The record gives the reactivity of an RNA of 207 nucleotides to 2A3 and DMS. Reactivities are given for positions 27 through 156. The data come from the RNA Mapping Database (RMDB), library RFM130. For DMS, 5,837 sequencing reads were counted. For 2A3 the reverse transcriptase was SuperScript II with manganese. The reactions ran in a buffer of 150 mM KOAc, 10 mM MgCl2 and 150 mM bicine (pH 8.5), at 24 C. For DMS the reverse transcriptase was MarathonRT.
RNA sequence: GGGAACGACUCGAGUAGAGUCGAAAAUGUCACCUGUGUGUUUUCUCUGCAUGCCCUCUUCAUUGUUCUGCUGAAGACUGGUCUCUUCAUGUGUGAGGGAGGAGGUUGGGUAUUGAGGGAAAACAGGGGGCUGCUCACUCCGAUUCGUCGGAGUGAACCAUAGCAAAGGUUUCGACCUUUGCUAUGGAAAAGAAACAACAACAACAAC
Reactivity to 2A3 in 0.01 (KOAc 150mM, MgCl2 10mM, bicine 150mM(pH8.5), 24C), signal-to-noise 7, nucleotides 027 to 156: u120g020u030c060a160c170c020u020g020u020g030u010g030u120u010u040u020c010u010c010u050g160c020a020u040g000c000c010c010u010c010u050u010c030a160u070u110g120u300u010c010u030g000c000u010g010a010a000g000a010c090u140g100g060u100c040u000c000u070u000c020a060u220g020u010g040u040g030a020g020g040g000a040g000g010a010g010g000u160u090g040g000g000u030a080u100u160g030a020g000g010g000a010a040a010a020c010a010g000g000g000g010g000c020u060g000c010u000c010a000c000u000c000c000g010a020u020u040c180g020u000c000g100g000a000g000u000g000a000a010
Reactivity to DMS in 0.01 (KOAc 150mM, MgCl2 10mM, bicine 150mM(pH8.5), 24C), signal-to-noise 1, nucleotides 027 to 156: u000g010u000c040a080c010c050u020g020u000g030u000g010u000u000u000u000c010u000c010u000g040c030a180u000g010c020c000c010u010c020u020u000c050a080u000u000g020u000u000c020u000g000c020u000g020a020a000g020a020c040u010g040g010u020c020u010c010u000u000c020a050u020g030u000g000u000g020a100g020g010g010a080g030g030a040g020g010u010u010g000g030g030u000a060u000u000g020a140g010g000g000a080a030a040a030c020a090g000g020g010g010g020c010u000g010c060u010c010a020c000u000c000c000g030a060u010u010c300g030u010c010g000g010a020g020u010g010a020a100